[RMDB]
RNA sequence: GGGAACGACUCGAGUAGAGUCGAAAAGGGGACGUUACGGAUUCGACAGGGAUAGAUUGAGCUCAGGUUGCACGUCGAGGUUACGGCUCGUAAAACGUUAUGCCUAAAUAUAACUGGCAAAGAAACUAAUCAACCUGUUUUAGCAGCUGCGUAAGUACACCCUAAUACACUUCGGUGUAUUAGGGUGAAAAGAAACAACAACAACAAC
Reactivity to DMS in 0.01 (KOAc 150mM, MgCl2 10mM, bicine 150mM(pH8.5), 24C), signal-to-noise 3, nucleotides 027 to 156: g020g040g040g030a080c080g010u000u010a090c030g020g030a220u000u000c050g010a060c040a080g080g000g000a110u000a080g030a150u000u000g000a100g000c060u000c110a060g010g030u000u000g010c070a070c080g020u000c060g010a080g040g030u000u000a100c070g010g040c020u030c030g030u000a030a030a070a080c060g000u000u000a110u030g010c000c020u000a050a040a100u010a110u000a080a120c100u000g010g000c040a030a060a120g010a100a080a070c050u000a060a090u000c020a030a060c060c030u020g020u010u000u000u000a140g020c010a130g000c020u010g000c030g010u000a050a090g020u000a200
Reactivity to 2A3 in 0.01 (KOAc 150mM, MgCl2 10mM, bicine 150mM(pH8.5), 24C), signal-to-noise 4, nucleotides 027 to 156: g000g000g000g000a000c010g010u030u070a020c040g010g040a080u040u080c020g010a030c040a050g000g010g000a030u080a060g070a050u060u150g040a030g000c010u000c050a010g020g030u020u040g030c050a030c120g110u070c010g030a010g010g000u030u050a030c020g050g040c000u000c020g120u170a050a010a030a000c010g020u020u030a050u080g010c020c020u060a070a150a030u260a040u050a100a110c090u080g000g030c000a000a070a010g090a000a080a000c070u110a050a030u050c040a030a030c000c000u020g040u030u120u030u040a020g020c040a000g010c030u060g000c050g060u000a060a000g010u010a020
Structure probing data (DMS and 2A3) for a 207-nucleotide construct. For DMS the reverse transcriptase was MarathonRT. For DMS, 6,164 sequencing reads were counted. Values cover nucleotides 27 to 156. Source: RMDB library RSTRND, as collected in RNAgym.